[RMDB]
The record gives the reactivity of an RNA of 177 nucleotides to 2A3 and DMS.
The data come from the RNA Mapping Database (RMDB), libraries RFM100 and RFMREP.
For 2A3 the reverse transcriptase was SuperScript II with manganese.
In probing experiments dimethyl sulfate is read out at A N1 and C N3, which are open when not base-paired.
For DMS the reverse transcriptase was MarathonRT.
The RNA was probed in 150 mM KOAc, 10 mM MgCl2 and 150 mM bicine (pH 8.5) at 24 C.

RNA sequence: GGGAACGACUCGAGUAGAGUCGAAAAGCAUAUAUUGCGAGCCAGAUAGGGCAGAACGCGCAGUCCGUGCAGACCACGGCAGAGUCGCAUUUGCGUUGCUCGAGGCGCAACCGAUACCGCCAAAGAGGAUGAAUAUGCUAUUCGUAGCAUAUUCAUCAAAAGAAACAACAACAACAAC
Reactivity to 2A3 in 0.01 (KOAc 150mM, MgCl2 10mM, bicine 150mM(pH8.5), 24C), signal-to-noise 9, nucleotides 027 to 126: g000c030a020u140a010u030a060u160u150g010c020g010a020g020c000c010a060g070a240u200a120g050g010g000c030a020g060a160a030c050g000c000g000c040a010g040u050c010c010g010u020g000c020a030g040a150c040c010a020c020g010g000c020a020g020a020g140u130c030g010c050a040u040u040u120g020c030g040u040u080g010c030u030c050g020a070g010g010c010g000c010a010a000c010c000g020a030u070a090c020c050g050c020c020a080a100a020g190a050g150
Reactivity to DMS in 0.01 (KOAc 150mM, MgCl2 10mM, bicine 150mM(pH8.5), 24C), signal-to-noise 9, nucleotides 027 to 126: g000c030a050u010a110u010a050u010u010g010c010g010a100g000c040c030a120g010a110u030a100g020g000g010c010a110g010a060a100c180g010c030g000c030a070g000u010c030c030g010u000g000c080a140g010a150c150c020a060c070g010g000c030a090g000a230g020u020c020g000c070a140u010u010u010g000c030g010u000u010g010c050u010c060g010a090g010g000c030g020c050a040a110c150c030g000a060u010a070c080c020g000c030c030a060a090a110g010a120g010